[RMDB]
RNA sequence: GGGAACGACUCGAGUAGAGUCGAAAAUUUGCACUUUAAUCUCAGUUAUCAAAAUUUUAUCUGGCGAAACUAAUUACGCUCUUGCUGCUUAAUCGAAUCAUAGUAGAUUAGCUUAAUCCAGGCACCAGGUGCCAGGACGAGACAUCACUCGGAAGCUGCCAUAUAGUGAGUUCGCUCACUAUAUGGCAAAAGAAACAACAACAACAAC
Reactivity to 2A3 in 0.01 (KOAc 150mM, MgCl2 10mM, bicine 150mM(pH8.5), 24C), signal-to-noise 1, nucleotides 027 to 156: u070u000u080g000c050a030c030u060u120u250a190a230u070c030u040c010a070g000u110u120a110u130c110a090a100a180a070u160u210u090u060a040u010c030u040g000g000c030g030a080a000a090c000u040a090a060u270u110a040c030g000c000u030c000u030u090g050c010u000g010c010u100u140a010a030u040c010g060a000a100u010c080a080u060a040g010u000a000g010a000u010u010a000g000c000u020u130a030a000u040c010c010a040g010g000c000a010c050c130a100g200g000u030g000c000c000a000g010g010a000c030g000a000g040a010c050a080u030c040a030c010u040c000g010g030a110a020g080c080u040
The record gives the reactivity of an RNA of 207 nucleotides to 2A3. Values cover nucleotides 27 to 156. Conditions: 150 mM KOAc, 10 mM MgCl2 and 150 mM bicine (pH 8.5), 24 C.